Overview: Conditions: 150 mM KOAc, 10 mM MgCl2 and 150 mM bicine (pH 8.5), 24 C. An RNA of 207 nucleotides, treated with 2A3 and DMS and read out base by base. It was measured as part of the RMDB library OK3TST. DMS adducts were read by reverse transcription with MarathonRT. Reactivities are given for positions 27 through 156.
[RMDB]
RNA sequence: GGGAACGACUCGAGUAGAGUCGAAAAGGUACUGCCAUUUGGAUUUUGUCUGUCUCAUACCCAGUGUCUGUUUUCUAGGCAUUAUUGCUCAUUGUUGUCUGGAAAUUGGUUUUUAUCUUGAGGGAAUUUGUAGCAGAAACUGUCUUUGAAAGCAAUCCAAUCACCAAGUGUUCGCACUUGGUGAUUGAAAAGAAACAACAACAACAAC
Reactivity to 2A3 in 0.01 (KOAc 150mM, MgCl2 10mM, bicine 150mM(pH8.5), 24C), signal-to-noise 2, nucleotides 027 to 156: g050g000u020a000c040u040g010c000c020a080u050u070u070g060g000a050u090u020u040u180g070u050c020u000g010u000c010u000c020a060u080a070c000c010c020a060g010u040g050u070c060u020g070u030u070u030u030c030u050a020g020g000c010a000u030u070a050u070u240g030c040u060c120a080u040u110g040u060u010g020u010c040u020g010g060a050a050a070u030u030g050g020u070u050u010u060u120a110u030c050u030u040g040a060g000g030g060a030a070u140u070u060g020u070a010g000c010a000g060a020a060a020c030u030g020u040c000u050u110u090g050a060a020a000g010c020a000a010u060c050
Reactivity to DMS in 0.01 (KOAc 150mM, MgCl2 10mM, bicine 150mM(pH8.5), 24C), signal-to-noise 2, nucleotides 027 to 156: g020g010u000a060c030u000g000c040c030a160u000u010u000g010g020a130u010u000u000u000g020u000c030u010g030u000c010u000c030a110u000a160c060c020c000a130g000u010g010u000c000u010g010u010u000u000u010c060u010a030g010g000c000a030u000u000a070u000u010g020c030u000c060a120u010u000g010u010u020g030u000c020u000g010g000a030a070a110u000u010g020g010u030u000u000u000u000a070u020c080u000u010g020a120g020g000g000a070a110u010u000u010g020u000a070g020c020a080g010a060a060a050c050u000g010u000c030u000u010u010g000a050a090a080g000c040a060a240u000c040